An RNA of 177 nucleotides, treated with DMS and 2A3 and read out base by base. Source: RMDB library OK1LIB, as collected in RNAgym. For DMS, 9,730 sequencing reads were counted. The RNA was probed in 150 mM KOAc, 10 mM MgCl2 and 150 mM bicine (pH 8.5) at 24 C. For DMS the reverse transcriptase was MarathonRT.
RNA sequence: GGGAACGACUCGAGUAGAGUCGAAAAUGUCCGCUUCAAUUUGCUGCAGAUGCAACGAGAAGAUUUGGCCACGGGCAGUUUGCAGCUUGGGUAAGACGUACCAUCCGCACCACUUCACCUGCAAGGACACGAGUGAAAAUUUCGAUUUUCACUCGUGAAAAGAAACAACAACAACAAC
Reactivity to DMS in 0.01 (KOAc 150mM, MgCl2 10mM, bicine 150mM(pH8.5), 24C), signal-to-noise 4, nucleotides 027 to 126: u050g000u010c000c020g020c040u000u020c040a060a100u020u030u010g000c000u000g010c140a090g030a120u010g000c010a040a050c060g000a260g010a080a050g010a180u010u010u010g020g000c030c050a190c030g000g000g000c020a060g000u000u010u000g000c020a060g000c030u000u020g000g000g010u020a030a070g000a040c020g010u020a080c040c010a070u000c050c030g000c020a040c010c020a020c050u000u000c040a010c020c010u010g000c050a060a080g010g010a300
Reactivity to 2A3 in 0.01 (KOAc 150mM, MgCl2 10mM, bicine 150mM(pH8.5), 24C), signal-to-noise 9, nucleotides 027 to 126: u100g020u000c000c020g020c010u050u050c050a120a190u070u060u140g010c020u030g030c030a040g050a150u080g020c020a080a100c050g050a020g020a170a050g030a060u110u080u190g080g010c030c020a050c030g010g000g000c020a060g080u030u060u060g020c020a030g000c020u030u070g070g010g020u080a070a040g040a040c040g020u020a040c010c020a030u030c020c020g010c010a020c010c010a020c000u050u040c020a020c020c010u030g010c040a050a050g040g000a010
2A3 adducts were read by reverse transcription with SuperScript II with manganese.